An RNA of 207 nucleotides, treated with 2A3 and read out base by base.
RNA sequence: GGGAACGACUCGAGUAGAGUCGAAAAUAUCGAUACGAAUAUCGCUGGAUGACGAGUUGCGGAUCUACAGUAAUGAGAAACUGGUGGCCUCACAUCGCCUCUGUUCAGCAUCGUCUGGCUGGCAGACAGUGCCGGAGCAUCACGCCCCGCUCUGGCAGGGAUGUUACCAGUUCGCUGGUAACAUCCCAAAAGAAACAACAACAACAAC
Reactivity to 2A3 in 0.01 (KOAc 150mM, MgCl2 10mM, bicine 150mM(pH8.5), 24C), signal-to-noise 2, nucleotides 027 to 156: u200a040u070c040g000a020u090a250c150g060a160a060u150a040u100c060g000c060u000g010g130a070u040g010a000c030g030a030g060u030u000g120c040g070g020a110u000c010u020a040c000a050g010u140a060a170u240g060a090g050a120a100a030c020u000g000g000u050g010g000c030c000u060c000a040c010a090u040c030g040c040c000u000c000u040g040u160u230c040a020g010c030a040u130c010g030u000c030u010g040g000c000u000g000g080c000a000g050a000c030a010g130u050g030c000c000g000g000a000g000c000a040u170c040a080c070g100c020c000c000c000g000c000u010c000u000g000g000c000a000
Source information:
It was measured as part of the RMDB library OK3TST. Values cover nucleotides 27 to 156. For 2A3, 734 sequencing reads were counted.